An RNA of 177 nucleotides, treated with 2A3 and DMS and read out base by base. For DMS the reverse transcriptase was MarathonRT. For 2A3 the reverse transcriptase was SuperScript II with manganese. Source: RMDB library RFM100, as collected in RNAgym. For DMS, 1,863 sequencing reads were counted. The reactions ran in a buffer of 150 mM KOAc, 10 mM MgCl2 and 150 mM bicine (pH 8.5), at 24 C.
[RMDB]
RNA sequence: GGGAACGACUCGAGUAGAGUCGAAAACGUAGGCUAGAGGAUCGAAGACGAUUAGAGAGACCGUUGUAGUUCUAGCAGUAAACGAUGCCGAUACCGUGGUGCGGAUAGGCGACGCGGAAGAAAAAUCCUGUGCUCUUGGAUUCGUCCAAGAGCACAGAAAAGAAACAACAACAACAAC
Reactivity to 2A3 in 0.01 (KOAc 150mM, MgCl2 10mM, bicine 150mM(pH8.5), 24C), signal-to-noise 3, nucleotides 027 to 126: c010g030u020a030g060g010c020u020a020g000a020g070g030a130u060c010g040a050a030g040a030c050g050a070u120u270a080g050a020g020a000g010a150c040c040g010u020u090g020u040a040g030u010u000c010u000a020g000c010a020g050u100a000a080a050c030g030a020u090g040c000c020g020a080u080a080c000c020g020u050g050g070u130g030c030g060g040a100u060a060g070g030c030g020a020c040g000c020g010g010a050a000g030a050a150a040a000a020u030c000
Reactivity to DMS in 0.01 (KOAc 150mM, MgCl2 10mM, bicine 150mM(pH8.5), 24C), signal-to-noise 1, nucleotides 027 to 126: c000g000u000a080g040g000c000u000a020g000a050g000g020a010u000c050g000a180a150g000a040c040g010a050u000u000a100g000a170g050a140g000a090c010c030g010u010u040g000u000a030g000u070u000c010u000a000g010c040a070g030u010a010a120a090c020g010a130u010g010c010c000g000a070u010a000c050c010g060u000g000g020u010g040c040g000g000a090u000a240g050g000c030g000a050c020g000c090g030g000a030a040g000a040a120a140a130a030u010c060